Source information
Chemical mapping of a 177-nucleotide RNA with DMS. It was measured as part of the RMDB library OK2TRN. Values are in units of 0.01, from 0 to 300, in steps of 10.

RNA sequence: GGGAACGACUCGAGUAGAGUCGAAAAACAGCCUGGCCCCAAGACACAAGAGCACUGGGCUGGCUUGAGGAGCACCAGGUGACCAAGACCAGGCAAUGCACAGGGGGAAGUCAGCAGGCCCCAUGGAACACUAGAGACCGUUCGCGGUCUCUAGUGUAAAAGAAACAACAACAACAAC
Reactivity to DMS in 0.01 (KOAc 150mM, MgCl2 10mM, bicine 150mM(pH8.5), 24C), signal-to-noise 1, nucleotides 027 to 126: a030c090a190g000c000c010u000g030g000c050c000c030c000a230a060g000a160c230a140c090a110a090g010a200g000c110a050c060u010g000g000g000c050u000g000g000c020u000u000g030a130g000g000a090g070c060a100c010c050a010g020g000u000g050a140c020c040a270a060g020a110c000c040a040g000g000c000a130a090u000g020c070a140c060a150g000g000g000g000g060a180a020g010u010c100a070g020c110a140g040g000c000c000c000c030a090u030g020g000a210